[RMDB]
RNA sequence: GGGAACGACUCGAGUAGAGUCGAAAAGAACCAAUUAGCCUGCUUGAUGCGGGCAAUUGAUGACAGAAAAGCUACCCUAGGGAUAACAGAGUCGUCACUCGCAAGAGCACAUAUCGACCGAGUGGCUUGCUACCUCGAUGUCGGUUCCCUCCAUCCUCCAAUAGGGAUUCUUCGGAAUCCCUAUUGGAAAAGAAACAACAACAACAAC
Reactivity to 2A3 in 0.01 (KOAc 150mM, MgCl2 10mM, bicine 150mM(pH8.5), 24C), signal-to-noise 1, nucleotides 027 to 156: g020a020a040c060c000a000a000u000u010a100g000c000c000u060g030c030u170u230g160a140u300g020c000g000g000g000c000a000a000u000u000g010a010u070g030a020c030a060g170a070a210a000a020g030c010u050a050c020c010c060u090a100g000g090g100a060u030a200a030c030a050g100a020g140u070c020g000u000c010a010c030u000c000g000c030a090a040g000a020g080c120a030c000a190u290a040u070c040g030a040c000c010g020a000g050u000g010g000c000u000u060g000c000u030a070c000c060u010c010g020a030u250g000u010c020g110g040u010u000c010c000c000u000c000c000a060u030c000c020u000